[RMDB]
RNA sequence: GGGAACGACUCGAGUAGAGUCGAAAAGGGGUCGUGCUAGGACGUCGAAGCCAGAUCCAAUGAUGCCACUGAAGCCUCCACGGUGGUUGAGGAUCUGGUGGAGUCCUUGGACCACGACGGAGGCACCCAAAGGAGACGUCCUUCGGGACGUCUCCAAGGGUAAUAUAAUGUUCGCAUUAUAUUACCCAAAAGAAACAACAACAACAAC
Reactivity to 2A3 in 0.01 (KOAc 150mM, MgCl2 10mM, bicine 150mM(pH8.5), 24C), signal-to-noise 8, nucleotides 027 to 156: g070g020g020g010u010c010g020u040g040c030u040a000g010g000a010c020g030u300c010g090a000a000g010c000c000a000g000a010u000c010c010a040a090u200g050a030u090g020c000c000a000c010u020g050a150a010g020c000c000u000c000c010a010c010g020g000u000g000g040u010u040g070a050g000g000a000u000c000u010g000g000u000g000g000a000g000u000c000c000u010u040g020g040a030c040c000a000c010g010a010c040g000g000a000g000g000c000a010c000c000c000a070a070a030g000g000a000g000a000c010g000u010c010c000u030u050c120g060g000g000a000c000g000u000c000u000c000c000a000a000
Reactivity to DMS in 0.01 (KOAc 150mM, MgCl2 10mM, bicine 150mM(pH8.5), 24C), signal-to-noise 2, nucleotides 027 to 156: g000g020g020g050u000c000g040u010g020c100u000a020g050g010a020c010g000u000c100g000a300a300g040c010c000a010g020a000u000c000c010a110a050u000g000a030u000g010c020c000a020c020u000g020a020a110g000c010c000u010c050c000a300c060g010g010u000g010g010u000u000g000a050g020g000a000u000c000u000g000g000u000g000g000a060g040u000c000c000u000u010g010g000a110c030c000a020c000g000a040c070g020g000a050g090g020c000a080c000c010c010a090a100a130g010g010a020g020a040c040g030u010c000c000u000u000c290g050g000g020a020c020g010u000c000u010c010c000a000a080